[RMDB]
Conditions: 150 mM KOAc, 10 mM MgCl2 and 150 mM bicine (pH 8.5), 24 C. This 177-nucleotide RNA was probed chemically with 2A3 and DMS. 2A3 adducts were read by reverse transcription with SuperScript II with manganese. The 2A3 profile rests on 2,139 reads. Source: RMDB library OK2TST, as collected in RNAgym. Reactivities are rounded to 0.1 and cut off at 0 and 3.
RNA sequence: GGGAACGACUCGAGUAGAGUCGAAAAUACUAAUACAGUAAACAUCAGAAGAAACUGGCUCCAAGGAAACCUGAAUUAUACAUCUAGCUACAUACACAGUUGUUCAAUGAUGGUCUUCAGAGAUAUCCCCCUUGUAUUAGUUCGCUAAUACAAGGGGAAAAGAAACAACAACAACAAC
Reactivity to 2A3 in 0.01 (KOAc 150mM, MgCl2 10mM, bicine 150mM(pH8.5), 24C), signal-to-noise 3, nucleotides 027 to 126: u060a000c040u060a000a160u160a140c040a040g040u070a030a120a060c030a080u150c020a050g150a180a010g020a040a240a020c020u010g030g030c010u020c020c000a050a030g040g000a100a040a010c000c000u010g030a050a040u100u040a080u070a070c010a030u000c020u010a010g040c040u050a050c020a060u110a050c060a040c020a130g040u020u010g030u090u070c020a040a030u070g010a020u020g000g040u000c020u040u030c010a010g020a000g010a130u030a110u150c010
Reactivity to DMS in 0.01 (KOAc 150mM, MgCl2 10mM, bicine 150mM(pH8.5), 24C), signal-to-noise 3, nucleotides 027 to 126: u020a070c060u000a090a100u010a110c090a030g010u020a070a110a110c060a030u000c090a070g010a110a100g000a100a100a060c050u000g000g000c050u020c030c060a090a060g020g000a050a090a050c050c010u000g000a070a040u000u020a030u010a080c070a040u000c010u010a040g020c040u000a080c130a080u010a110c170a060c090a020g010u000u000g010u000u000c100a010a090u000g010a060u000g000g020u000c120u000u000c100a070g000a110g000a060u000a100u000c080